Annotation
Structure probing data (DMS and 2A3) for a 177-nucleotide construct. 2A3 adducts were read by reverse transcription with SuperScript II with manganese. The 2A3 profile rests on 2,103 reads. The DMS profile rests on 9,714 reads. For DMS the reverse transcriptase was MarathonRT. Source: RMDB library OK2TRN, as collected in RNAgym. The reactions ran in a buffer of 150 mM KOAc, 10 mM MgCl2 and 150 mM bicine (pH 8.5), at 24 C.
[RMDB]
RNA sequence: GGGAACGACUCGAGUAGAGUCGAAAACUGGUAAAGAGGGCUAGAAAGUGGGGAAUACGUGUAGUUGGUCCCAAUUGUCUUGGGGUUACUAACUUGGAGAAUGGGUUUGAUUGUAAUUUUAAUCCUCUCACCCUAUAAAGUUCGCUUUAUAGGGUGAAAAAGAAACAACAACAACAAC
Reactivity to DMS in 0.01 (KOAc 150mM, MgCl2 10mM, bicine 150mM(pH8.5), 24C), signal-to-noise 6, nucleotides 027 to 126: c080u000g010g010u010a060a080a100g010a110g010g000g000c110u010a090g010a080a070a100g010u010g010g010g000g000a090a090u010a070c150g020u010g020u000a030g010u000u000g010g000u000c000c000c010a020a030u010u020g000u010c300u000u010g000g000g000g010u000u010a040c020u000a020a030c030u000u010g000g010a100g010a090a100u000g000g000g000u000u000u000g010a080u010u000g000u030a050a100u010u010u000u000a050a130u010c030c070u000c260
Reactivity to 2A3 in 0.01 (KOAc 150mM, MgCl2 10mM, bicine 150mM(pH8.5), 24C), signal-to-noise 2, nucleotides 027 to 126: c010u030g020g000u020a010a030a000g090a080g030g000g020c040u060a050g150a100a170a000g060u090g020g000g000g020a090a070u100a090c100g020u080g030u090a010g010u000u000g010g010u020c000c000c000a020a030u130u160g110u050c060u050u020g020g010g040g030u080u040a010c020u020a030a030c020u010u050g110g010a080g070a180a090u070g030g030g020u090u060u110g080a110u040u100g040u050a040a070u000u090u010u150a080a060u020c010c000u040c000